RNA sequence: GGGAACGACUCGAGUAGAGUCGAAAAUCGCCUUUAUCGAUGCUAAGACCAUUAGGGCGUCUAUUAGUAGGUCUACAUUAUCCACGGCCCAUAUCACCCCGUCGGCAAUCGCGGAGAACGCUGUUCCGAGUUUUUCGGCUGCUUCUUUACCUCGGUCGCUCCCAGCAAUAUUCGUAUUGCUGGGAGCAAAAGAAACAACAACAACAAC
Reactivity to 2A3 in 0.01 (KOAc 150mM, MgCl2 10mM, bicine 150mM(pH8.5), 24C), signal-to-noise 1, nucleotides 027 to 156: u050c000g060c000c050u130u080u100a140u240c050g010a020u060g030c040u090a080a060g060a070c000c020a090u030u250a080g000g040g030c040g000u000c050u080a190u140u140a060g120u020a070g070g010u010c000u030a040c060a120u040u180a040u170c030c030a040c040g010g000c000c000c060a060u070a020u080c010a060c020c000c000c020g030u020c000g000g010c010a010a050u050c080g000c060g000g000a020g030a050a020c080g010c050u040g030u150u060c030c000g020a060g010u110u130u000u000u000c040g010g020c020u020g050c020u020u090c040u090u130u080a100c010c060u010c080g040g020u100c060
This 207-nucleotide RNA was probed chemically with 2A3. The RNA was probed in 150 mM KOAc, 10 mM MgCl2 and 150 mM bicine (pH 8.5) at 24 C. For 2A3 the reverse transcriptase was SuperScript II with manganese. Reactivities are given for positions 27 through 156. It was measured as part of the RMDB library OK3TST.